[RMDB]
RNA sequence: GGGAACGACUCGAGUAGAGUCGAAAAAGCAUGCUUCGAAUAAAAAUAAACUCUCUCGAAGUCGAAUAAAUAAAUAGUGUAAAAUCACGAAAGACGAUAAAGAUUCGAGCAUGCGAAGAGAGAGGAAGGGUACAUUGUAGUUCGCUACAAUGUACCCAAAAGAAACAACAACAACAAC
Reactivity to 2A3 in 0.01 (KOAc 150mM, MgCl2 10mM, bicine 150mM(pH8.5), 24C), signal-to-noise 1, nucleotides 027 to 126: a000g000c000a010u000g040c040u160u190c130g000a060a020u050a100a000a150a000a000u210a080a130a060c080u020c000u000c000u000c010g010a010a010g000u030c000g000a130a000u120a050a020a000u230a000a080a000u010a050g000u010g100u110a030a240a120a180u290c010a000c000g010a100a000a000g060a010c060g020a000u260a140a020a080g160a000u000u000c000g030a000g040c000a000u000g000c000g000a000a030g000a000g000a000g000a000g030g040a070a080
Reactivity to DMS in 0.01 (KOAc 150mM, MgCl2 10mM, bicine 150mM(pH8.5), 24C), signal-to-noise 1, nucleotides 027 to 126: a070g000c000a010u000g020c020u000u010c000g030a050a030u060a000a000a140a080a040u040a100a060a230c000u000c000u000c000u000c000g010a110a100g000u030c000g120a200a070u020a000a020a100u000a080a050a080u020a110g000u000g000u000a160a130a060a100u040c010a000c000g000a100a090a170g020a000c090g000a080u020a020a100a250g000a160u010u010c010g000a000g010c040a000u000g000c000g040a000a110g020a020g000a000g000a120g020g000a100a090